[RMDB]
Chemical mapping of a 177-nucleotide RNA with 2A3 and DMS. It was measured as part of the RMDB library OK2TST. For DMS the reverse transcriptase was MarathonRT. The DMS profile rests on 843 reads. As a SHAPE reagent, 2A3 marks flexible, mostly unpaired nucleotides at the ribose 2'-OH. The reactions ran in a buffer of 150 mM KOAc, 10 mM MgCl2 and 150 mM bicine (pH 8.5), at 24 C. In probing experiments dimethyl sulfate is read out at A N1 and C N3, which are open when not base-paired.

RNA sequence: GGGAACGACUCGAGUAGAGUCGAAAAUAUGAAUCGCAAGAAGAUUAUAGUGGCCGUCGUUAUUGUCGCUCUGUUGGCGGCAAUAGGUUACGGAUGGAGUUAUUAUCGCCAACAACAAGACGCCACACGCUAGUAGAUGCUUCGGCAUCUACUAGCGAAAAGAAACAACAACAACAAC
Reactivity to 2A3 in 0.01 (KOAc 150mM, MgCl2 10mM, bicine 150mM(pH8.5), 24C), signal-to-noise 1, nucleotides 027 to 126: u290a050u080g010a060a030u050c110g000c110a050a040g020a050a050g020a060u090u020a050u070a150g020u020g130g000c200c030g020u020c010g070u090u040a030u010u000g030u000c060g000c010u030c120u190g280u300u200g020g020c040g000g020c000a000a000u000a010g000g060u050u050a040c060g060g070a050u050g190g010a010g050u110u010a160u250u060a080u090c010g000c040c020a010a000c000a050a010c000a000a150g030a000c010g050c000c000a000c000a020
Reactivity to DMS in 0.01 (KOAc 150mM, MgCl2 10mM, bicine 150mM(pH8.5), 24C), signal-to-noise 1, nucleotides 027 to 126: u010a010u000g000a300a120u000c010g030c170a110a100g020a070a080g010a050u000u000a060u000a140g020u020g000g010c070c090g010u020c020g010u000u010a050u000u010g020u000c050g030c010u000c260u040g040u000u010g070g010c020g010g010c040a000a000u000a020g020g000u000u010a100c260g010g000a070u000g000g000a030g000u020u000a090u010u000a070u000c000g000c020c000a070a070c230a010a040c050a070a160g000a000c010g010c010c010a030c030a270